[RMDB]
RNA sequence: GGGAACGACUCGAGUAGAGUCGAAAAAUACAUACUGACACCGGUUGCUCAACAGGCUGUGUGGGACAAUAGAAUAACAAGGCUGUCAAUUUGAGCUUGACGGCUGCAAACCGAAUGGAGUGAAAUUGUAACCGGACUCACUUCGGUGAGUCCGGAAUCGAAAACAAUACUUCGGUAUUGUUUUCGAAAAAGAAACAACAACAACAAC
Reactivity to 2A3 in 0.01 (KOAc 150mM, MgCl2 10mM, bicine 150mM(pH8.5), 24C), signal-to-noise 2, nucleotides 027 to 156: a010u120a020c040a000u130a040c060u090g080a010c020a010c030c000g040g030u070u120g010c000u020c050a110a100c000a100g080g000c040u000g000u020g000u040g060g000g020a010c060a070a050u070a130g100a040a050u100a080a000c030a050a070g050g000c000u010g010u070c000a020a010u060u090u120g050a040g060c000u020u030g020a000c000g000g020c020u060g000c020a040a090a030c020c020g060a070a070u110g020g030a050g060u060g020a020a080a110u050u070g040u070a030a100c010c010g000g000a000c000u010c000a000c000u000u110c110g030g000u000g000a010g000u000c000c000g000g080a000a000
Reactivity to DMS in 0.01 (KOAc 150mM, MgCl2 10mM, bicine 150mM(pH8.5), 24C), signal-to-noise 1, nucleotides 027 to 156: a190u010a060c040a120u000a060c000u000g030a100c000a090c050c010g030g010u020u000g000c040u030c020a050a120c050a090g010g000c000u010g040u010g010u000g020g060g000a030c060a030a100u000a100g000a120a090u000a090a120c090a110a140g020g030c030u000g000u000c010a000a030u000u000u020g010a200g000c260u000u030g020a020c050g020g090c000u000g030c050a070a030a150c030c030g000a110a170u020g060g050a130g000u000g040a030a090a110u000u000g020u000a030a150c020c000g050g000a000c000u020c000a000c010u000u000c300g070g050u030g030a010g040u000c000c010g040g060a020a020
The record gives the reactivity of an RNA of 207 nucleotides to 2A3 and DMS.
DMS adducts were read by reverse transcription with MarathonRT.
For 2A3, 797 sequencing reads were counted.
The RNA was probed in 150 mM KOAc, 10 mM MgCl2 and 150 mM bicine (pH 8.5) at 24 C.
It was measured as part of the RMDB library M2RFPK.
2A3 adducts were read by reverse transcription with SuperScript II with manganese.